[RMDB]
The record gives the reactivity of an RNA of 177 nucleotides to 2A3 and DMS. In probing experiments dimethyl sulfate is read out at A N1 and C N3, which are open when not base-paired. Source: RMDB library OK2TRN, as collected in RNAgym. Conditions: 150 mM KOAc, 10 mM MgCl2 and 150 mM bicine (pH 8.5), 24 C. For 2A3, 6,164 sequencing reads were counted.
RNA sequence: GGGAACGACUCGAGUAGAGUCGAAAACUGCUAUCCGCGUAUUGAAGCGGGUCAGCCGACCGUGUGCUCAGAAACCUGUGUCGGUCGUAUCCGUUAUCUUGGCGUGCUGUUGUACGAUGCCGACGCACGGAUAUAAUCAGUUCGCUGAUUAUAUCCGAAAAGAAACAACAACAACAAC
Reactivity to 2A3 in 0.01 (KOAc 150mM, MgCl2 10mM, bicine 150mM(pH8.5), 24C), signal-to-noise 4, nucleotides 027 to 126: c020u000g060c040u090a100u080c050c050g000c030g040u070a170u150u270g080a080a000g000c010g000g000g020u020c030a030g000c010c010g000a030c000c020g040u060g040u060g030c010u030c100a040g180a130a070a040c020c010u040g020u050g010u150c000g000g000u010c020g000u070a020u020c020c000g010u040u060a200u190c030u050u130g070g000c040g030u060g030c030u120g050u200u120g000u060a020c050g060a080u140g060c010c040g030a000c020g000c000a040
Reactivity to DMS in 0.01 (KOAc 150mM, MgCl2 10mM, bicine 150mM(pH8.5), 24C), signal-to-noise 6, nucleotides 027 to 126: c040u000g010c110u010a070u010c070c060g000c010g010u010a150u000u010g010a070a110g000c000g010g000g000u000c050a110g010c010c030g000a040c020c020g020u000g010u010g020c020u010c130a130g010a090a100a080c040c020u000g010u010g010u000c000g010g000u000c050g010u000a020u000c020c020g010u000u000a080u000c070u000u010g000g010c020g020u000g010c060u010g000u000u010g010u000a070c080g000a100u000g020c020c010g010a040c070g000c050a290